The data come from the RNA Mapping Database (RMDB), library OK1LIB. Structure probing data (2A3) for a 177-nucleotide construct. The 2A3 profile rests on 698 reads.
RNA sequence: GGGAACGACUCGAGUAGAGUCGAAAAAUUUCCACGCUUGGGCCGGAGGGAAAGAGAACUUCACUCGUCACGCCGCGAUCCCCAUCUUGAAUCUGCUGCCGCGGAAAGCGUCGUAGGAUGGCUCCCUGGCUCCUAGCAGUUUCGACUGCUAGGAGCCAAAAGAAACAACAACAACAAC
Reactivity to 2A3 in 0.01 (KOAc 150mM, MgCl2 10mM, bicine 150mM(pH8.5), 24C), signal-to-noise 2, nucleotides 027 to 126: a010u000u030u080c000c000a060c040g050c080u070u140g010g010g000c020c020g030g060a030g060g000g110a000a200a050g090a050g010a080a030c000u070u060c070a040c060u070c000g070u070c040a010c040g000c010c000g000c000g070a070u060c020c000c010c000a020u060c050u050u000g160a170a160u060c060u130g000c040u040g010c030c000g020c030g000g000a030a030a000g010c040g000u000c030g000u050a020g040g040a040u030g060g000c000u000c000c000c000u020